[RMDB]
RNA sequence: GGGAACGACUCGAGUAGAGUCGAAAACACAAAGCCUGCAAUAUCGAACAGAGUAGAGCCUAUCAAGUCUGCGGCAUGAAAAAAAGCGCGAUGUAAGUAAAGGAGGGGGAAUAUUUACAUCGCGUUGAUCGCACUUCUAAUUCGUUAGAAGUGCGAUAAAAGAAACAACAACAACAAC
Reactivity to DMS in 0.01 (KOAc 150mM, MgCl2 10mM, bicine 150mM(pH8.5), 24C), signal-to-noise 3, nucleotides 027 to 126: c080a110c100a100a150a120g010c030c000u020g010c040a080a100u040a110u020c060g030a120a270c080a110g000a080g010u000a090g000a090g010c030c050u000a070u000c080a070a100g010u020c040u020g010c020g000g000c030a050u000g030a010a000a050a080a050a090a080g010c010g020c000g010a010u000g000u000a000a010g010u000a020a080a130g020g030a090g000g000g000g000g010a090a290u000a010u010u000u000a000c000a010u000c000g010c000g010u000u010g000
Reactivity to 2A3 in 0.01 (KOAc 150mM, MgCl2 10mM, bicine 150mM(pH8.5), 24C), signal-to-noise 8, nucleotides 027 to 126: c090a000c020a030a100a010g030c000c010u040g000c030a040a080u060a090u240c050g070a070a050c040a080g040a030g080u110a030g020a030g040c020c010u120a110u110c050a080a010g080u000c030u040g020c010g000g000c020a060u150g100a050a080a050a030a000a010a020g010c000g000c000g010a000u000g000u010a000a020g000u010a050a160a150g160g060a180g010g040g000g010g010a030a050u040a020u060u000u000a000c000a010u000c000g000c000g010u010u020g000
Structure probing data (DMS and 2A3) for a 177-nucleotide construct. The reactions ran in a buffer of 150 mM KOAc, 10 mM MgCl2 and 150 mM bicine (pH 8.5), at 24 C. Source: RMDB libraries RFM100 and RFMREP, as collected in RNAgym. Values cover nucleotides 27 to 126.